[RMDB]
RNA sequence: GGGAACGACUCGAGUAGAGUCGAAAAACGGGCAGUGGCGAUGGCAACGCGGCAGCCGCAGGGUCGACUUCUUCGCAGCCGCAACAGACGGGCCACGGGCAAAGAGGGGCCCUCGUUCUGUUGGAAGGCUACGGACUAUUUUCGAAUAGUCCGUAGCAAAAGAAACAACAACAACAAC
Reactivity to DMS in 0.01 (KOAc 150mM, MgCl2 10mM, bicine 150mM(pH8.5), 24C), signal-to-noise 2, nucleotides 027 to 126: a100c020g010g000g000c060a010g010u010g010g050c070g000a040u030g000g050c080a060a080c060g010c060g010g000c000a110g030c090c020g000c100a090g000g000g000u000c020g010a040c090u000u000c060u000u010c080g000c040a090g040c020c010g020c040a010a040c020a020g010a020c040g010g000g000c000c020a060c050g010g010g000c090a030a080a060g000a090g000g000g000g000c010c000c010u070c060g010u000u010c020u000g000u000u010g000g000a080a130g000
Reactivity to 2A3 in 0.01 (KOAc 150mM, MgCl2 10mM, bicine 150mM(pH8.5), 24C), signal-to-noise 6, nucleotides 027 to 126: a000c060g000g030g000c020a030g030u060g050g010c040g040a110u090g080g000c050a070a010c030g000c010g050g000c020a010g040c020c020g020c020a020g050g010g010u050c020g030a060c020u060u020c000u070u050c080g020c050a020g030c020c010g030c020a010a000c010a010g030a010c020g000g000g000c020c000a060c040g010g050g030c120a130a090a000g070a080g040g020g000g000c000c010c000u020c030g030u100u010c010u010g000u010u000g010g060a080a040g120
This 177-nucleotide RNA was probed chemically with DMS and 2A3.
2A3 adducts were read by reverse transcription with SuperScript II with manganese.
The reactions ran in a buffer of 150 mM KOAc, 10 mM MgCl2 and 150 mM bicine (pH 8.5), at 24 C.
The data come from the RNA Mapping Database (RMDB), library OK1LIB.